[RMDB]
RNA sequence: GGGAACGACUCGAGUAGAGUCGAAAAGAUAUGGACGUAACAGCAACAGCGUAUGGAUCGGAAACGAUCUUUACGACAUGCUGGAGAAGUCCUAAGUCAAAGUACUUUACGUUCGCGUAAAGUACAACACAUGACAAGGGUUCGCCCUUGUCAUGUGAAAAGAAACAACAACAACAAC
Reactivity to DMS in 0.01 (KOAc 150mM, MgCl2 10mM, bicine 150mM(pH8.5), 24C), signal-to-noise 4, nucleotides 027 to 126: g010a010u010a300u000g000g000a000c000g010u000a080a300c010a000g000c000a020a070c280a150g010c020g030u000a000u000g000g000a000u000c000g030g000a070a050a120c000g010a000u000c010u000u000u000a010c000g010a080c120a120u000g010c010u000g000g010a090g010a080a170g010u000c000c000u000a020a140g000u000c030a090a120a130g020u010a010c020u000u000u000a010c000g020u000u010c270g020c000g010u000a000a000a000g000u000a000c000a100a150
Reactivity to 2A3 in 0.01 (KOAc 150mM, MgCl2 10mM, bicine 150mM(pH8.5), 24C), signal-to-noise 2, nucleotides 027 to 126: g040a020u080a050u200g010g010a000c010g010u030a090a040c020a010g000c020a010a150c030a300g080c010g000u000a010u030g000g000a010u000c010g010g000a040a050a010c010g000a000u000c000u020u010u000a000c000g150a090c040a050u140g000c000u010g000g030a030g040a010a000g000u000c000c000u020a080a000g040u020c040a120a000a140g000u010a000c000u010u020u000a020c020g050u000u090c300g000c000g120u010a010a010a000g000u010a010c010a000a000

Structure probing data (DMS and 2A3) for a 177-nucleotide construct. Source: RMDB library TTRDEL, as collected in RNAgym. For DMS the reverse transcriptase was MarathonRT. 2A3 adducts were read by reverse transcription with SuperScript II with manganese.